[RMDB]
RNA sequence: GGGAACGACUCGAGUAGAGUCGAAAACGCUGGGAGGACCCUGCACUGAUGGGACAUGCUGAAGCGCGCACGGCAACAGCCCAUCACUGCAGCCUCCUGUGCUGAAGCGCGCACGGCAACCGAAAGGUGCGAAAAUACCCAUCUUCGGAUGGGUAAACUUCAUCAGAUGAUUCGUCAUCUGAUGAAGAAAAGAAACAACAACAACAAC
Reactivity to 2A3 in 0.01 (KOAc 150mM, MgCl2 10mM, bicine 150mM(pH8.5), 24C), signal-to-noise 4, nucleotides 027 to 156: c020g000c020u030g010g000g000a010g010g020a090c210c010c010u010g020c000a010c010u000g000a000u010g000g000g040a140c130a230u210g000c020u030g020a260a090g010c020g000c010g020c010a030c030g020g000c030a240a100c040a300g010c020c000c000a000u000c000a000c020u030g000c000a030g040c000c000u000c010c000u010g020u020g010c020u070g030a110a030g000c010g000c000g000c010a010c000g030g010c030a050a050c020c010g060a120a040a020g010g000u010g000c010g020a080a060a000a000u050a010c000c000c000a000u000c000u020u040c250g100g000a000u000g000g000g000u020a050a000a000
Reactivity to DMS in 0.01 (KOAc 150mM, MgCl2 10mM, bicine 150mM(pH8.5), 24C), signal-to-noise 1, nucleotides 027 to 156: c130g040c040u000g000g000g010a070g050g000a290c040c300c050u000g020c050a020c050u050g010a040u000g010g040g010a040c000a160u010g050c000u000g040a040a040g040c010g040c020g020c040a300c070g000g040c000a160a130c030a070g000c000c010c040a010u000c000a010c050u000g000c000a050g020c000c030u000c000c020u010g000u010g000c030u010g010a160a040g030c020g020c000g070c000a300c040g020g010c040a110a160c010c000g010a060a130a230g010g000u000g050c010g030a070a070a100a170u000a030c010c000c000a010u010c000u000u000c300g010g010a000u040g010g020g010u000a000a020a040
This 207-nucleotide RNA was probed chemically with 2A3 and DMS. Conditions: 150 mM KOAc, 10 mM MgCl2 and 150 mM bicine (pH 8.5), 24 C.